[RMDB]
RNA sequence: GGGAACGACUCGAGUAGAGUCGAAAAGAGCGAAGUUCCCAGCAGAGGGGUGAAAAUGCUCUGGAAUUGAGGCCCCUCUAACAAUAAUCCAAAACUACUUCGCAGAGUAAUCUGCCGAAUCGUAGGACCUCACCUCAUUUUUCGAAAUGAGGUGAGGAAAAGAAACAACAACAACAAC
Reactivity to 2A3 in 0.01 (KOAc 150mM, MgCl2 10mM, bicine 150mM(pH8.5), 24C), signal-to-noise 4, nucleotides 027 to 126: g040a010g020c040g070a140a000g010u010u000c000c010c000a000g000c030a000g000a000g010g030g010g000u110g140a040a070a030a080u130g010c000u000c000u050g120g170a300a220u100u050g030a030g040g040c010c000c000c000u000c000u000a000a010c000a010a040u180a000a050u040c040c020a000a000a070a160c000u010a000c010u010u000c000g010c010a010g000a000g050u150a170a180u000c020u040g030c120c060g000a010a010u090c080g000u020a010g040g060a030
Reactivity to DMS in 0.01 (KOAc 150mM, MgCl2 10mM, bicine 150mM(pH8.5), 24C), signal-to-noise 2, nucleotides 027 to 126: g020a040g000c010g030a110a110g020u020u000c000c000c000a180g000c200a000g040a000g020g000g020g010u000g000a080a050a130a080u020g000c000u040c080u000g020g030a210a090u000u020g020a130g000g000c050c000c000c010u000c000u000a060a120c160a110a050u050a100a080u040c060c080a050a120a190a080c000u000a020c000u000u000c030g000c000a000g000a020g000u080a100a080u000c000u000g000c100c060g000a010a010u050c290g000u000a010g000g000a130